This 170-nucleotide RNA was probed chemically with DMS and 2A3.
2A3 adducts were read by reverse transcription with SuperScript II with manganese.
The DMS profile rests on 100,275 reads.
DMS (dimethyl sulfate) methylates the pairing face of unpaired adenines and cytosines.
Values cover nucleotides 27 to 129.
RNA sequence: GGGAACGACUCGAGUAGAGUCGAAAAUCGAGGGCCUUCCUUCUUCGGUGAUCCUGCCUCUCCUUGUCGGUGAAUCCUCCCCUGAGGGGCCUCUUUCCAGGUCCGGAGUCUACUUCCAUCUGGACCAUCAGUGUCUAGUUCGCUAGACACAAAAGAAACAACAACAACAAC
Reactivity to DMS in 0.01 (KOAc 150mM, MgCl2 10mM, bicine 150mM(pH8.5), 24C), signal-to-noise 9, nucleotides 027 to 129: u030c060g000a080g010g000g010c000c050u010u020c050c060u020u040c000u010u020c000g000g060u020g010a090u030c020c020u020g010c010c030u030c010u030c010c060u020u050g030u040c070g020g050u000g030a090a080u060c050c000u000c010c030c010c000u030g020a110g040g020g000g020c020c040u020c050u020u020u010c050c060a130g030g020u000c000c050g000g000a000g000u040c120u060a130c120u040u030c080c070a130u000c040u020g030g000a000c000c010a030u060c090a040
Reactivity to 2A3 in 0.01 (KOAc 150mM, MgCl2 10mM, bicine 150mM(pH8.5), 24C), signal-to-noise 9, nucleotides 027 to 129: u080c020g000a040g010g020g040c010c050u090u070c070c010u050u070c010u040u040c030g040g020u050g040a070u040c010c010u030g030c000c010u020c010u020c000c030u050u090g090u130c070g050g030u090g080a060a100u060c000c020u030c010c020c000c010u020g030a050g010g000g010g000c010c000u040c000u020u070u020c030c030a050g000g000u000c000c010g010g000a010g020u020c060u130a170c070u200u040c060c010a130u000c010u010g000g000a010c000c010a060u090c070a030